An RNA of 207 nucleotides, treated with DMS and 2A3 and read out base by base. The data come from the RNA Mapping Database (RMDB), library OK3TST. Reactivities are given for positions 27 through 156. Conditions: 150 mM KOAc, 10 mM MgCl2 and 150 mM bicine (pH 8.5), 24 C. 2A3 adducts were read by reverse transcription with SuperScript II with manganese. 2A3 is a SHAPE reagent: it acylates the 2'-hydroxyl of flexible nucleotides of all four kinds. The 2A3 profile rests on 1,779 reads. DMS adducts were read by reverse transcription with MarathonRT.
[RMDB]
RNA sequence: GGGAACGACUCGAGUAGAGUCGAAAAAUGCGCUAUGAUCACAUCACUGCACUGCAGCCUAAGUAACGGAGCAAGACCUUGUCUCAAACAAGCAAACAACAAUCAAAGAAUGCUUCCUUUCACCCUCAAAAGUGACCUGCUUUGGAUGGCAAAGUAAGCCCAAAAUGAUAUUCGUAUCAUUUUGGGCAAAAGAAACAACAACAACAAC
Reactivity to DMS in 0.01 (KOAc 150mM, MgCl2 10mM, bicine 150mM(pH8.5), 24C), signal-to-noise 2, nucleotides 027 to 156: a100u000g050c000g050c040u010a020u010g010a100u000c030a100c030a300u000c020a010c010u000g000c050a090c070u020g010c060a140g010c050c000u000a010a140g000u000a010a130c100g040g010a080g000c080a100a140g020a080c060c000u000u020g000u000c000u000c070a110a090a130c070a060a110g020c060a060a100a110c070a020a050c050a040a120u010c080a050a090a100g040a080a160u000g000c010u000u000c010c000u000u000u000c020a080c010c010c000u000c070a030a040a060a070g050u000g000a050c050c050u000g050c070u000u000u000g000g030a060u000g010g000c000a060a030a060g020u020a040a300
Reactivity to 2A3 in 0.01 (KOAc 150mM, MgCl2 10mM, bicine 150mM(pH8.5), 24C), signal-to-noise 3, nucleotides 027 to 156: a010u120g000c040g000c030u030a020u180g020a080u070c010a010c020a090u020c000a030c040u040g010c060a040c090u110g040c000a010g020c010c010u080a130a050g030u050a050a040c060g040g020a040g030c060a100a030g040a070c000c000u060u080g050u010c040u010c050a080a140a040c040a090a000g070c030a040a110a020c020a040a040c010a090a030u110c040a120a090a020g090a020a050u080g020c020u030u060c000c030u000u050u070c040a050c010c020c020u040c040a000a100a090a000g030u040g050a090c000c030u040g000c030u060u000u010g050g050a100u060g020g010c000a020a000a000g050u280a110a020